Structure probing data (2A3 and DMS) for a 207-nucleotide construct. Source: RMDB library ARCHII, as collected in RNAgym. For 2A3 the reverse transcriptase was SuperScript II with manganese. Conditions: 150 mM KOAc, 10 mM MgCl2 and 150 mM bicine (pH 8.5), 24 C.

[RMDB]
RNA sequence: GGGAACGACUCGAGUAGAGUCGAAAACGCAUCAAGCAUGGCGUCAACAUGGUUGAUUCUGAGGAGUCAGAGCCGACCAGGUUCGUCAAAGAGGGUCGGACCGGCCGAGGGCGGAAACGCAGCAGGCAAAAGUCCCCGCGUCAGCGCAGUGAUGGGAGAAGGUAUAGUACUUCGGUACUAUACCUUCAAAAGAAACAACAACAACAAC
Reactivity to 2A3 in 0.01 (KOAc 150mM, MgCl2 10mM, bicine 150mM(pH8.5), 24C), signal-to-noise 2, nucleotides 027 to 156: c120g020c020a010u010c040a020a030g040c040a060u010g020g000c000g080u070c030a050a030c020a050u010g010g000u010u010g010a040u020u010c040u020g040a080g090g070a070g140u050c010a010g010a010g020c000c000g000a000c000c000a010g000g040u060u040c040g070u070c090a030a050a010g150a100g020g010g020u090c030g030g010a020c030c000g040g010c020c010g030a090g020g000g020c030g030g010a050a020a010c020g000c010a010g000c010a010g000g000c000a040a000a000a010g020u010c040c010c000c000g020c010g010u030c010a050g020c020g000c210a070g100u020g050a030u020g000g050g040a190
Reactivity to DMS in 0.01 (KOAc 150mM, MgCl2 10mM, bicine 150mM(pH8.5), 24C), signal-to-noise 1, nucleotides 027 to 156: c020g020c030a070u000c020a060a130g070c020a300u020g000g010c020g000u000c040a040a040c020a040u040g000g000u000u000g030a000u000u010c030u010g000a030g040g010a300g040u000c000a040g000a060g020c000c000g000a030c000c030a080g000g060u000u000c050g030u010c060a040a080a210g020a110g080g020g000u000c010g030g020a050c000c030g020g050c020c000g010a110g010g000g010c000g050g010a090a090a070c030g000c010a080g020c020a190g000g010c000a000a010a030a300g000u020c020c000c020c010g000c030g010u010c020a050g030c120g070c000a070g020u010g000a050u000g020g000g000a230
DMS adducts were read by reverse transcription with MarathonRT.